[RMDB]
RNA sequence: GGGAACGACUCGAGUAGAGUCGAAAAGUCAGCGUCGCGACGUCGAUCACGGCGGCCGGCUUGAAGCGCUCCGCGUACGUGAGCGCGUCGCACAGGAUGAGGCGGCCCUCCGCGUCGGUGUUGAGCACGAUGACGUACGCUUCGGCGUACGUCAUCGAAAAGAAACAACAACAACAAC
Reactivity to 2A3 in 0.01 (KOAc 150mM, MgCl2 10mM, bicine 150mM(pH8.5), 24C), signal-to-noise 1, nucleotides 027 to 126: g010u010c010a000g050c020g050u050c060g010c000g050a020c010g050u240c000g020a050u050c030a000c020g020g070c020g020g000c090c030g060g100c000u050u130g130a100a020g000c030g000c030u000c080c030g020c120g140u190a190c060g010u120g060a010g010c010g050c010g000u000c010g120c000a070c010a070g100g020a080u140g050a040g070g050c000g000g000c020c020c020u040c000c060g020c040g010u010c000g000g040u040g050u090u110g050a070g010c100a000
Reactivity to DMS in 0.01 (KOAc 150mM, MgCl2 10mM, bicine 150mM(pH8.5), 24C), signal-to-noise 2, nucleotides 027 to 126: g010u010c030a080g020c030g010u020c030g000c040g000a090c030g000u010c030g010a060u010c040a040c050g010g060c300g000g000c140c110g020g020c040u020u020g000a100a090g010c040g010c000u000c000c030g000c180g020u040a040c160g020u000g010a010g010c030g020c000g010u000c010g000c080a080c130a100g000g010a130u020g010a050g000g000c000g000g000c020c000c020u020c020c010g000c260g000u000c010g000g000u000g010u000u010g010a140g000c070a160
Structure probing data (2A3 and DMS) for a 177-nucleotide construct. Values cover nucleotides 27 to 126. The DMS profile rests on 1,806 reads.